[RMDB]
RNA sequence: GGGAACGACUCGAGUAGAGUCGAAAAUUAACUAGCGUAGGGAACCAAGCAAAGAGGUAAGAAAUCCCACGGUAGUAGGCUUGGUUCGCGCCGGAGGAAGAAGAAGUCCCACUCCCUACGCCACAAAGUUGGUACAUAUCUUCGGAUAUGUACCAACAAAAGAAACAACAACAACAAC
Reactivity to DMS in 0.01 (KOAc 150mM, MgCl2 10mM, bicine 150mM(pH8.5), 24C), signal-to-noise 2, nucleotides 027 to 126: u000u030a060a090c150u000a050g050c000g000u000a040g010g010g000a020a020c000c010a060a070g040c070a120a090a170g010a120g030g010u030a130a080g000a070a090a100u000c010c000c110a090c090g000g000u000a080g010u000a080g010g000c020u010u000g050g010u000u000c060g010c070g000c030c020g010g000a120g000g010a070a070g020a100a060g010a120a100g000u000c010c020c010a140c050u000c000c000c010u000a030c010g000c000c250a080c200a030a070a090
Reactivity to 2A3 in 0.01 (KOAc 150mM, MgCl2 10mM, bicine 150mM(pH8.5), 24C), signal-to-noise 2, nucleotides 027 to 126: u040u030a050a040c100u030a010g020c000g010u000a000g010g000g000a020a010c000c030a010a010g030c030a010a220a000g170a060g080g000u140a100a060g080a160a120a020u030c000c000c030a010c070g010g070u100a090g060u010a030g030g080c050u020u060g010g000u060u020c040g020c030g000c040c000g030g020a050g020g030a040a090g050a080a000g060a030a000g090u030c020c010c000a010c000u000c000c000c010u000a010c010g010c000c040a050c020a020a110a000
Source: RMDB library M2PK90, as collected in RNAgym. Structure probing data (DMS and 2A3) for a 177-nucleotide construct. For 2A3 the reverse transcriptase was SuperScript II with manganese. DMS adducts were read by reverse transcription with MarathonRT. DMS (dimethyl sulfate) methylates the pairing face of unpaired adenines and cytosines. Reactivities are given for positions 27 through 126.